[RMDB]
RNA sequence: GGGAACGACUCGAGUAGAGUCGAAAAUAGUAGAACUUUUAUAGAUAACGAUUUGGAUUUUGUAGACGAGGAGGAUAGUGAUCGAAUCAGAUCGGCGGAUGCUAUCCCGGAUGUGGCACAUUCGUUAGUACUGUCUUAACUUCGGUUAAGACAGUACAAAAGAAACAACAACAACAAC
Reactivity to DMS in 0.01 (KOAc 150mM, MgCl2 10mM, bicine 150mM(pH8.5), 24C), signal-to-noise 3, nucleotides 027 to 126: u010a060g010u000a060g010a130a120c060u000u000u020u000a100u000a140g010a130u000a050a070c030g010a020u010u000u000g010g010a070u000u010u000u010g010u010a090g000a110c040g000a120g010g000a120g010g010a050u000a040g010u000g000a020u010c010g010a060a110u000c160a070g020a040u000c050g010g010c080g020g010a050u010g000c040u000a050u000c030c010c020g000g000a040u000g010u000g010g010c140a190c070a030u000u010c030g010u000u020a150
Reactivity to 2A3 in 0.01 (KOAc 150mM, MgCl2 10mM, bicine 150mM(pH8.5), 24C), signal-to-noise 3, nucleotides 027 to 126: u080a000g100u020a030g010a100a050c020u000u210u110u170a220u140a100g070a070u100a120a040c030g030a030u020u000u090g060g010a050u000u010u050u300g150u130a070g020a110c070g020a020g070g060a050g030g000a040u010a010g090u090g060a070u050c020g040a050a080u060c030a060g040a090u040c000g040g000c020g070g030a030u130g000c020u010a010u030c010c000c020g020g010a070u090g000u070g090g010c070a000c000a070u010u020c010g000u010u010a040